RNA sequence: GGGAACGACUCGAGUAGAGUCGAAAAGGCGAUGUAUGCUGGAGCGGCUAGAAAAGCAAAUGUAGGCAUAAGUAACGAUAAAGGGGGCGAGAAACCCCCUCGCCGUAAGACUAAGGUUUCCACAGCUACAUUAGGAGGGAUUCGUCCCUCCUAAUGUAAAAGAAACAACAACAACAAC
Reactivity to 2A3 in 0.01 (KOAc 150mM, MgCl2 10mM, bicine 150mM(pH8.5), 24C), signal-to-noise 4, nucleotides 027 to 126: g000g000c010g010a030u090g010u100a010u050g030c000u030g040g010a080g070c050g020g000c040u060a040g150a180a220a070a010g050c020a090a060a010u190g030u080a010g030g000c000a020u000a100a020g100u080a060a090c060g060a110u120a090a080a030g000g000g000g000g000c030g000a080g100a090a070a070c010c000c000c000c000u000c000g000c000c010g000u030a010a000g000a000c030u050a060a020g050g000u030u010u000c000c020a040c020a060g060c040u010
Reactivity to DMS in 0.01 (KOAc 150mM, MgCl2 10mM, bicine 150mM(pH8.5), 24C), signal-to-noise 5, nucleotides 027 to 126: g010g010c000g010a090u020g010u010a010u000g000c000u030g020g010a120g030c170g020g000c020u000a080g010a060a120a140a080g000c030a040a040a040u030g010u010a190g000g020c040a030u010a020a070g000u010a050a090c150g000a110u010a060a100a050g000g010g010g000g010c000g010a130g010a090a090a240c010c000c000c010c010u000c010g010c040c000g000u000a030a110g000a040c040u010a050a090g000g020u000u000u000c000c010a080c240a090g000c200u000